[RMDB]
RNA sequence: GGGAACGACUCGAGUAGAGUCGAAAAACUAUUUGUUCUAUAGCAAAGAAACCCGAAACACAGUAUAUAUUUGUUAUAUAUGCUUUGUGGUACACAGCUGUUAGGACGUGAGCCAUCAGGGUCCAAAAUUUACUGAUGAGUUCGCUCAUCAGUAAAUAAAAGAAACAACAACAACAAC
Reactivity to DMS in 0.01 (KOAc 150mM, MgCl2 10mM, bicine 150mM(pH8.5), 24C), signal-to-noise 4, nucleotides 027 to 126: a120c110u000a070u030u010u030g010u010u020c110u020a050u060a020g010c010a020a110a120g030a130a100a080c010c020c120g020a090a120a030c030a030c030a010g000u010a010u010a000u000a030u010u020u010g000u050u010a070u010a000u000a000u000g010c020u000u000u000g020u010g000g000u020a100c140a110c130a110g020c030u000g020u010u010a040g000g000a030c020g000u010g010a140g020c040c060a050u020c090a060g020g010g010u000c030c060a030a050a060
Reactivity to 2A3 in 0.01 (KOAc 150mM, MgCl2 10mM, bicine 150mM(pH8.5), 24C), signal-to-noise 4, nucleotides 027 to 126: a000c090u090a090u090u080u100g020u000u000c030u070a050u140a050g000c030a070a080a010g040a040a130a060c000c050c040g060a050a090a000c040a000c010a000g010u000a000u000a000u010a010u030u140u110g080u250u040a010u010a000u000a000u020g010c000u020u040u060g060u060g000g020u060a050c070a000c010a040g000c010u030g020u140u040a030g000g040a000c030g060u080g030a020g030c010c000a060u100c100a070g080g060g000u020c010c000a000a040a020
Conditions: 150 mM KOAc, 10 mM MgCl2 and 150 mM bicine (pH 8.5), 24 C. Structure probing data (DMS and 2A3) for a 177-nucleotide construct. For 2A3, 2,962 sequencing reads were counted. Values cover nucleotides 27 to 126.